[RMDB]
RNA sequence: GGGAACGACUCGAGUAGAGUCGAAAAGGGGUCUGUCGAUGGUAGUAACAGGGAGCGAACACAGGCUGAAGCCUCCACGGCCUGUGAUUCGCGAGGAUCUGUUACGAGAGUAGACAGACGGAGGCACCCAAAACUGCAUCGUUUCGACGAUGCAGAAGAUCAAUCGAGAGUUCGCUCUCGAUUGAUCAAAAGAAACAACAACAACAAC
Reactivity to 2A3 in 0.01 (KOAc 150mM, MgCl2 10mM, bicine 150mM(pH8.5), 24C), signal-to-noise 1, nucleotides 027 to 156: g110g000g080g000u000c000u000g000u010c000g030a060u090g090g070u010a020g010u010a000a000c000a000g000g000g000a010g000c000g000a010a000c000a000c000a010g000g000c000u000g010a060a000g000c000c000u000c020c000a010c020g020g000c000c000u010g010u000g050a300u000u000c000g000c000g010a050g010g000a000u000c000u000g000u000u010a000c000g010a000g000a010g010u050a000g010a000c020a000g000a000c000g000g000a010g000g000c000a060c000c000c000a040a040a010a070c010u000g000c000a010u000c000g010u010u060u170c300g040a030c010g000a010u000g000c000a000g010a020a000

An RNA of 207 nucleotides, treated with 2A3 and read out base by base. The reactions ran in a buffer of 150 mM KOAc, 10 mM MgCl2 and 150 mM bicine (pH 8.5), at 24 C. Reactivities are given for positions 27 through 156. It was measured as part of the RMDB library RNAMAK. The 2A3 profile rests on 1,828 reads.